[RMDB]
RNA sequence: GGGAACGACUCGAGUAGAGUCGAAAACAGCGGUCGGCAACUCCGGUGGUUACAUACACGCUGAUCUCGCUGAAUGCGCUGGUGUUCGUCAUGCAAGUGACCGUGAUGGGUCUGGAACGGCAGCUCGCAUCCUUGUGACAUUCGUGUCACAAGGAUGAAAAGAAACAACAACAACAAC
Reactivity to 2A3 in 0.01 (KOAc 150mM, MgCl2 10mM, bicine 150mM(pH8.5), 24C), signal-to-noise 4, nucleotides 027 to 126: c020a000g020c000g010g020u030c010g000g000c050a090a050c070u060c090c050g140g020u090g020g050u120u160a090c040a030u190a080c040a030c140g000c010u010g050a070u010c110u070c070g000c010u050g040a130a060u170g030c030g000c040u090g040g300u020g070u040u040c040g050u060c080a060u140g050c070a080a110g060u030g090a040c000c020g040u040g070a090u140g100g000g020u020c020u040g020g000a030a010c000g050g020c020a000g010c010u030c030g040
Reactivity to DMS in 0.01 (KOAc 150mM, MgCl2 10mM, bicine 150mM(pH8.5), 24C), signal-to-noise 4, nucleotides 027 to 126: c030a020g010c010g010g020u000c030g000g010c010a100a110c100u000c110c110g020g020u010g010g010u010u000a100c210a130u010a070c090a070c080g020c020u000g000a060u000c060u010c050g010c040u000g010a100a070u010g020c100g010c020u000g000g010u010g000u000u000c040g000u000c090a080u010g020c200a080a150g000u000g000a030c010c050g010u010g000a100u010g000g000g010u000c040u010g010g010a030a060c030g000g000c020a040g000c040u000c040g010